This 177-nucleotide RNA was probed chemically with 2A3 and DMS. The reactions ran in a buffer of 150 mM KOAc, 10 mM MgCl2 and 150 mM bicine (pH 8.5), at 24 C. Reactivities are rounded to 0.1 and cut off at 0 and 3. Reactivities are given for positions 27 through 126. DMS adducts were read by reverse transcription with MarathonRT. For DMS, 1,253 sequencing reads were counted. It was measured as part of the RMDB library RFM100.
[RMDB]
RNA sequence: GGGAACGACUCGAGUAGAGUCGAAAAUUCGCAAUUGUAAAAGAUCCUUCUAACUGGGGCAUACAUCCCGAAACACCCUCUUUUUUUCCCCCGUCAGCGUGUCUGGUAACACAUUAAAAUAGAAUCGACAACGUAACGAGUUCGCUCGUUACGUUGUAAAAGAAACAACAACAACAAC
Reactivity to 2A3 in 0.01 (KOAc 150mM, MgCl2 10mM, bicine 150mM(pH8.5), 24C), signal-to-noise 2, nucleotides 027 to 126: u150u090c040g000c110a060a110u070u210g040u090a020a040a050a040g010a070u040c000c000u050u100c000u060a030a180c090u050g000g000g010g020c000a030u070a030c040a010u030c000c010c030g010a000a070a000c030a040c000c000c000u030c050u080u000u000u160u000u040u030c060c000c010c030c000g060u070c000a010g020c000g000u060g000u010c050u020g070g000u010a100a000c000a000c020a070u050u300a010a190a160a000u150a090g050a030a020u160c050g010
Reactivity to DMS in 0.01 (KOAc 150mM, MgCl2 10mM, bicine 150mM(pH8.5), 24C), signal-to-noise 1, nucleotides 027 to 126: u010u000c000g000c110a230a030u020u000g050u000a000a110a060a000g000a120u000c000c020u000u000c100u000a090a090c000u010g000g000g010g010c030a040u000a080c070a090u030c090c000c000g000a130a140a170c050a090c020c000c000u000c000u000u000u000u000u000u000u000c000c000c000c020c060g050u060c120a090g020c160g000u010g010u000c010u000g000g000u020a000a090c030a010c090a050u020u000a060a030a060a160u000a120g000a080a100u000c090g000